The record gives the reactivity of an RNA of 207 nucleotides to DMS and 2A3. Source: RMDB library OK3TST, as collected in RNAgym. For DMS the reverse transcriptase was MarathonRT. High DMS reactivity at an A or C suggests that its Watson-Crick edge is free. The reactions ran in a buffer of 150 mM KOAc, 10 mM MgCl2 and 150 mM bicine (pH 8.5), at 24 C.
[RMDB]
RNA sequence: GGGAACGACUCGAGUAGAGUCGAAAAGGCGGCACAUACCUGUGGUCCCAGCCGCACGAGAGACUGAGACAGGAGGAUCACUUGAACCUGGGUUGUUGAAGCUGUAGUGAGCCAUGUUCCUCCCACUACACUCCAGCCAGGUCGCAAAAAAGAAGGACGUACGAGUAAUGUUCGCAUUACUCGUACGAAAAGAAACAACAACAACAAC
Reactivity to DMS in 0.01 (KOAc 150mM, MgCl2 10mM, bicine 150mM(pH8.5), 24C), signal-to-noise 1, nucleotides 027 to 156: g040g080c010g020g100c020a150c130a070u000a040c020c060u010g020u000g030g020u000c000c000c010a120g000c000c000g040c030a100c100g010a160g000a060g020a120c040u000g010a100g010a080c070a130g000g010a100g020g010a030u010c030a050c010u000u000g030a060a080c000c010u000g000g020g030u000u010g000u000u000g010a030a070g040c080u000g040u010a010g010u010g010a040g010c010c010a060u010g000u000u000c000c010u000c030c030c000a020c010u000a020c000a060c010u000c000c000a090g000c020c010a020g010g020u000c020g000c080a010a070a090a070a070a080g000a100a050g000g010a250
Reactivity to 2A3 in 0.01 (KOAc 150mM, MgCl2 10mM, bicine 150mM(pH8.5), 24C), signal-to-noise 3, nucleotides 027 to 156: g050g000c030g000g030c020a020c040a110u200a090c030c040u080g000u020g050g010u010c010c000c010a030g000c020c000g040c020a030c080g090a110g000a000g010a080c070u150g050a030g010a070c060a060g020g060a030g020g010a000u050c000a030c020u020u080g070a000a020c010c000u040g020g140g000u080u030g040u040u150g040a060a030g000c110u020g010u000a000g000u000g010a010g060c100c060a230u240g050u050u040c010c010u030c000c030c000a010c010u010a000c000a010c000u010c000c000a010g020c000c000a000g000g000u000c010g000c020a070a120a060a010a020a010g130a060a040g050g020a010